Chemical mapping of a 177-nucleotide RNA with DMS and 2A3. 2A3 adducts were read by reverse transcription with SuperScript II with manganese. For 2A3, 1,882 sequencing reads were counted.
RNA sequence: GGGAACGACUCGAGUAGAGUCGAAAAUACGCUAAGUUCGCUUAGCGUAAAAUAUAUGGGACUAUAUAAAACCUGAUAGCCGAAGAAGAUCAUGUAUCGGCAAAAUCACCAUCUUCGGAUGGUGAAACGACAACUUCCUAUUCGUAGGAAGUUGUCGAAAAGAAACAACAACAACAAC
Reactivity to DMS in 0.01 (KOAc 150mM, MgCl2 10mM, bicine 150mM(pH8.5), 24C), signal-to-noise 2, nucleotides 027 to 126: u000a000c010g010c000u000a000a000g010u000u010c280g000c000u000u000a010g010c000g040u000a000a050a040a050u000a050u000a010u010g000g020g030a200c120u000a040u000a060u010a040a060a100a150c020c020u000g010a100u000a130g020c000c000g000a010a130g000a110a130g000a090u010c150a100u000g030u000a150u000c010g020g000c020a080a050a090a090u000c010a010c000c000a010u000c000u000u040c200g040g020a000u010g010g020u010g010a000a030a070
Reactivity to 2A3 in 0.01 (KOAc 150mM, MgCl2 10mM, bicine 150mM(pH8.5), 24C), signal-to-noise 2, nucleotides 027 to 126: u020a000c000g000c010u010a000a000g010u000u080c100g070c080u000u000a000g020c010g000u000a000a000a000a000u120a010u030a060u050g070g050g060a030c050u010a000u030a040u040a200a080a010a010c000c000u030g090a130u150a060g000c000c010g000a030a020g090a080a040g030a060u150c030a050u160g070u170a060u040c000g040g000c030a020a000a000a120u010c000a010c000c000a010u010c010u010u070c240g100g000a000u000g000g000u000g000a000a000a000